Chemical mapping of a 177-nucleotide RNA with DMS and 2A3. The RNA was probed in 150 mM KOAc, 10 mM MgCl2 and 150 mM bicine (pH 8.5) at 24 C. DMS adducts were read by reverse transcription with MarathonRT. The DMS profile rests on 2,317 reads.

RNA sequence: GGGAACGACUCGAGUAGAGUCGAAAAUGAGCAAGUUGGCCGAUGUGGCAUUGGAUAUCGGCCGCAGUGUCGGAUGCUCGGCCUACGAGAACGACUUCACGCUGCCGGACAUUCCAACGCAGUGGCGCUGGAUGGACACAUUCGUGUGUCCAUCCAGAAAAGAAACAACAACAACAAC
Reactivity to DMS in 0.01 (KOAc 150mM, MgCl2 10mM, bicine 150mM(pH8.5), 24C), signal-to-noise 2, nucleotides 027 to 126: u010g020a130g010c060a130a070g010u000u020g020g020c000c000g010a110u010g010u020g010g000c060a110u020u010g000g020a040u010a050u000c000g020g000c000c050g000c000a040g020u000g010u000c030g020g020a140u010g020c010u000c000g030g000c140c180u000a100c040g000a040g000a060a070c050g010a100c030u000u000c110a040c090g020c060u000g030c020c010g000g010a070c110a120u000u000c030c010a040a000c030g030c010a110g010u000g000g010c050g000
Reactivity to 2A3 in 0.01 (KOAc 150mM, MgCl2 10mM, bicine 150mM(pH8.5), 24C), signal-to-noise 1, nucleotides 027 to 126: u220g030a010g090c110a100a040g060u090u020g160g000c000c010g000a050u080g040u060g240g030c100a050u080u030g020g000a040u030a020u100c010g000g000c000c000g030c000a000g010u040g010u010c020g000g020a060u140g090c000u000c010g010g020c020c080u090a150c020g000a000g000a050a010c020g030a040c000u050u060c080a040c070g010c010u010g000c010c020g020g010a040c020a110u150u000c010c000a010a030c010g010c010a050g020u050g100g020c030g000
Source: RMDB library OK2TRN, as collected in RNAgym.